[RMDB]
RNA sequence: GGGAACGACUCGAGUAGAGUCGAAAACUGCCGCCGGGACGCAGUGAUCCUCGCAAGGUCGCACGGUCGCCUCGGGUCGGCCUCGUGUCGGCUCGACCUGCGAGGGGAGCGAGUGGCGAGCCCGACCAAAACUUUCUCGCCUUCGGGCGAGAAAGAAGUGUAAUAAUUACUUCGGUAAUUAUUACACAAAAGAAACAACAACAACAAC
Reactivity to DMS in 0.01 (KOAc 150mM, MgCl2 10mM, bicine 150mM(pH8.5), 24C), signal-to-noise 2, nucleotides 027 to 156: c000u000g000c020c030g010c000c020g010g020g000a220c040g030c010a210g030u010g020a100u020c020c000u000c060g000c050a070a050g010g010u010c040g020c080a100c000g020g010u010c040g040c020c040u000c030g030g040g020u010c020g020g000c020c030u000c110g010u010g040u000c030g030g050c020u010c020g010a030c030c010u000g000c000g000a060g000g000g000g000a140g100c020g000a160g040u020g000g000c000g010a120g010c020c020c000g020a070c020c030a070a100a140a240c000u010u010u010c010u010c000g010c000c010u000u000c300g000g030g000c010g000a010g010a000a000a020g000a030a110
Reactivity to 2A3 in 0.01 (KOAc 150mM, MgCl2 10mM, bicine 150mM(pH8.5), 24C), signal-to-noise 5, nucleotides 027 to 156: c020u040g020c010c010g020c010c010g090g040g110a060c050g010c020a080g170u010g020a010u000c000c000u000c010g000c030a120a170g010g010u040c030g000c060a050c080g060g010u020c010g010c010c020u020c010g010g010g010u030c020g040g050c020c000u080c110g200u260g020u030c030g020g000c060u040c040g010a000c000c000u000g000c000g000a010g000g000g000g000a000g000c000g010a070g080u080g040g000c000g010a060g010c020c040c010g020a020c020c020a020a070a040a070c000u000u000u010c000u000c010g000c000c000u040u050c130g090g000g000c000g000a000g000a000a000a000g000a040a010